[RMDB]
RNA sequence: GGGAACGACUCGAGUAGAGUCGAAAAUGGGCCUGCAGAGAGCUGCCUCCCACCCCUGCUCCUGCGAAGGAGGAAGCCAAGAGCCCCCAGGCUGCUUGGUCUACACGGGUCACGAGGCUGGUGGAUGCAGAGGAUAACUCUUCGGAGUUAUCCUCUGAAAAGAAACAACAACAACAAC
Reactivity to DMS in 0.01 (KOAc 150mM, MgCl2 10mM, bicine 150mM(pH8.5), 24C), signal-to-noise 4, nucleotides 027 to 126: u000g000g010g010c070c030u000g010c060a050g020a300g010a120g010c030u000g010c030c020u000c010c040c230a170c140c020c000c030u010g010c010u000c020c010u000g000c300g000a210a030g020g010a030g000g000a100a130g000c010c000a010a030g010a060g010c000c000c110c090c140a250g000g020c000u000g000c010u010u000g000g000u000c070u000a180c110a100c150g000g010g000u010c120a090c170g010a060g000g010c010u000g010g030u010g010g020a200u010g010